[RMDB]
RNA sequence: GGGAACGACUCGAGUAGAGUCGAAAACGUGGAGGCUCCCGAUAUCCUGCUCGUUGAACUGGGUGUCGAUUUGUCGCAUCGCAUCGACCGGGUCCUCAGCAAACGCCUGCAGGUUCUGAUGGACACUCGCUAUCGUCGCAAGCGUCGCUGCAAUCGGGUAAAUACCACGUUUCGACGUGGUAUUUACAAAAGAAACAACAACAACAAC
Reactivity to DMS in 0.01 (KOAc 150mM, MgCl2 10mM, bicine 150mM(pH8.5), 24C), signal-to-noise 2, nucleotides 027 to 156: c070g020u000g020g030a190g020g030c030u000c060c050c010g020a110u000a080u000c020c020u000g010c010u000c030g050u000u000g000a040a060c040u010g050g010g030u010g020u010c040g000a120u010u000u050g060u000c080g000c100a300u000c110g000c080a130u000c010g010a050c040c050g000g000g000u000c020c050u020c040a040g010c080a020a100a050c060g000c050c020u020g050c060a120g000g000u000u000c010u000g000a090u000g040g010a130c080a070c040u000c010g000c090u010a080u000c040g000u010c090g040c030a040a180g010c040g010u000c010g010c020u000g000c000a090a140u010c030g020g000
Reactivity to 2A3 in 0.01 (KOAc 150mM, MgCl2 10mM, bicine 150mM(pH8.5), 24C), signal-to-noise 4, nucleotides 027 to 156: c030g040u090g020g070a020g050g000c050u040c050c010c000g020a030u030a050u130c010c010u030g070c040u050c070g070u050u070g070a140a070c070u090g010g040g020u050g040u040c050g050a060u080u070u200g110u030c050g020c080a130u110c040g000c020a040u070c020g060a050c040c030g020g030g000u010c000c010u020c000a010g000c040a040a180a020c060g060c060c030u100g050c050a060g000g030u050u030c040u040g080a060u130g020g030a020c040a020c120u100c030g000c030u070a060u160c030g090u010c030g000c040a050a010g010c010g040u070c090g020c060u020g040c010a010a140u080c010g070g000
This 207-nucleotide RNA was probed chemically with DMS and 2A3. For DMS, 3,618 sequencing reads were counted. Reactivities are given for positions 27 through 156.